[RMDB]
RNA sequence: GGGAACGACUCGAGUAGAGUCGAAAAUGUUUGCAAUUCGUUGCAAACAAACUACCGAGAACGUUGCUCGGUAUAAACAGCGAACCCUUGGUAACAAGGGAACUAUGGAACGCUUCGGCGUUCCAAAUUCAAUACCCCAAUUCGUUGGGGUAUUGAAAAAAGAAACAACAACAACAAC
Reactivity to DMS in 0.01 (KOAc 150mM, MgCl2 10mM, bicine 150mM(pH8.5), 24C), signal-to-noise 4, nucleotides 027 to 126: u000g020u000u010u000g000c010a000a040u000u020c210g040u000u000g030c000a000a000a000c000a020a090a190c120u000a090c000c000g000a020g000a080a200c190g010u000u000g010c010u000c000g010g020u010a010u010a080a110a140c200a070g010c100g020a110a200c010c000c000u000u000g020g010u010a150a140c010a010a000g000g010g000a010a030c060u000a120u010g010g010a010a000c000g020c000u000u000c220g030g010c000g010u000u000c000c010a000a030a040
Reactivity to 2A3 in 0.01 (KOAc 150mM, MgCl2 10mM, bicine 150mM(pH8.5), 24C), signal-to-noise 2, nucleotides 027 to 126: u030g000u010u000u010g000c020a030a000u060u050c160g060u080u020g000c000a000a000a000c010a000a040a000c050u020a010c010c020g000a010g000a090a080c140g140u120u180g050c000u000c020g010g020u010a020u040a000a020a010c030a010g130c030g090a080a060c000c000c000u010u020g040g000u100a110a050c010a000a000g030g000g030a010a010c010u030a070u080g000g000a010a000c020g020c000u030u010c240g070g010c000g010u000u000c000c010a000a000a010
Chemical mapping of a 177-nucleotide RNA with DMS and 2A3. Conditions: 150 mM KOAc, 10 mM MgCl2 and 150 mM bicine (pH 8.5), 24 C. DMS adducts were read by reverse transcription with MarathonRT. For 2A3 the reverse transcriptase was SuperScript II with manganese.